[RMDB]
RNA sequence: GGGAACGACUCGAGUAGAGUCGAAAAUUGGUUGAAGUCAAACCAGCUGACUUAGGUAGUUCUUGUUCAUCAAUCCAUUAAUUCAACAAGUUGCCAUUAAACCUUGUGCUCUGUGGACAGUAUUAUCUUAGAUUUUGGGAAUACUGUAGGAAGCAAAGAUUAUCCUCGGUUUCGACCGAGGAUAAUCAAAAGAAACAACAACAACAAC
Reactivity to 2A3 in 0.01 (KOAc 150mM, MgCl2 10mM, bicine 150mM(pH8.5), 24C), signal-to-noise 3, nucleotides 027 to 156: u070u020g020g060u010u070g060a070a020g030u060c030a140a040a170c100c030a050g030c040u020g050a040c000u030u060a090g030g010u020a060g060u090u080c010u010u020g050u080u150c040a100u020c000a040a150u020c020c050a040u080u190a140a110u260u170c060a040a030c000a000a100g030u050u040g020c000c030a100u070u170a020a060a030c000c000u030u050g030u020g080c020u020c070u030g050u070g080g030a000c000a000g010u010a000u060u010a090u060c020u030u100a110g090a300u160u190u150u100g010g030g020a010a010u010a020c000u030g000u050a070g040g080a080a020g000c050a010a080a080
Reactivity to DMS in 0.01 (KOAc 150mM, MgCl2 10mM, bicine 150mM(pH8.5), 24C), signal-to-noise 2, nucleotides 027 to 156: u000u040g010g040u000u000g040a100a170g020u000c050a040a060a130c040c030a090g010c010u000g010a070c060u000u000a080g030g020u000a030g010u000u020c040u000u000g010u000u000c080a170u000c110a090a140u010c050c080a130u010u010a070a060u010u000c040a030a060c050a060a090g070u000u010g000c020c050a100u020u010a110a070a130c070c020u000u000g030u020g040c030u000c040u020g000u010g010g040a030c010a070g000u000a000u020u000a050u000c030u010u010a090g000a300u000u000u000u020g020g030g000a050a090u000a010c030u010g040u000a170g010g000a030a080g010c040a080a070a160